[RMDB]
RNA sequence: GGGAACGACUCGAGUAGAGUCGAAAAGAUAUGGAGCCGGUGCAAGCAUCGAUCUCGGAAACGAGGGAGCUUGUCACCAGGCUCCUAAGUCAAAACAGCUGAUCACGGUUCGCCGUGAUCAGCUGAAGCAUGAUUUACAGUUCGCUGUAAAUCAUGCAAAAGAAACAACAACAACAAC
Reactivity to 2A3 in 0.01 (KOAc 150mM, MgCl2 10mM, bicine 150mM(pH8.5), 24C), signal-to-noise 1, nucleotides 027 to 126: g030a010u080a020u100g000g010a010g000c020c010g010g050u020g000c010a000a020g010c030a150u300c040g080a140u040c010u010c000g000g050a050a040a070c020g000a010g030g020g000a020g000c000u000u000g010u050c010a000c010c010a000g000g000c000u000c000c000u030a020a010g000u000c000a020a010a120a170c010a000g000c000u000g000a020u010c000a000c020g000g110u100u170c300g010c100c000g030u000g000a000u000c000a020g000c010u000g000a000a000
Reactivity to DMS in 0.01 (KOAc 150mM, MgCl2 10mM, bicine 150mM(pH8.5), 24C), signal-to-noise 2, nucleotides 027 to 126: g000a070u000a300u010g000g000a000g010c030c000g020g030u000g000c000a020a020g030c000a300u010c160g000a050u010c000u000c000g020g000a130a150a180c000g000a060g000g010g000a020g010c010u000u000g000u010c010a020c040c000a020g030g000c000u000c000c000u000a000a070g010u000c040a080a080a090a230c010a010g020c010u000g010a010u000c010a010c000g010g020u020u010c300g000c000c000g010u000g000a000u000c010a000g010c000u000g000a030a050
Chemical mapping of a 177-nucleotide RNA with 2A3 and DMS. The RNA was probed in 150 mM KOAc, 10 mM MgCl2 and 150 mM bicine (pH 8.5) at 24 C. DMS adducts were read by reverse transcription with MarathonRT. The data come from the RNA Mapping Database (RMDB), library TTRDEL.